This 207-nucleotide RNA was probed chemically with 2A3. The reactions ran in a buffer of 150 mM KOAc, 10 mM MgCl2 and 150 mM bicine (pH 8.5), at 24 C. 2A3 adducts were read by reverse transcription with SuperScript II with manganese.

RNA sequence: GGGAACGACUCGAGUAGAGUCGAAAAACUAAUCCAAAGCAAGUAUAGUAGAACAGGUUUUUAACUAUUUUUAGGCAGAUAAAAAAUAGUAUUUGACAGUCUAACACUAACUGAACAAUAAGUGUUAAAAACUCCCUCCUGUUCGCAGGAGGGAGAACAGUCACUGCUAGUUCGCUAGCAGUGACUGAAAAGAAACAACAACAACAAC
Reactivity to 2A3 in 0.01 (KOAc 150mM, MgCl2 10mM, bicine 150mM(pH8.5), 24C), signal-to-noise 1, nucleotides 027 to 156: a000c030u070a020a060u050c040c040a020a000a010g020c000a010a000g030u050a040u120a080g070u040a060g050a080a070c130a090g080g020u090u010u000u050u030a050a030c030u020a010u000u010u010u000u010a020g020g000c040a040g060a220u100a050a060a050a000a000a000u010a000g020u040a100u090u040u100g010a020c000a000g000u000c010u000a010a010c000a000c010u010a010a000c000u010g100a100a010c010a030a040u020a000a000g000u000g000u010u000a000a160a000a000a000c000u010c000c000c000u000c010c000u010g020u030u060c190g000c050a010g000g000a000g000g000g010a010g000a000a000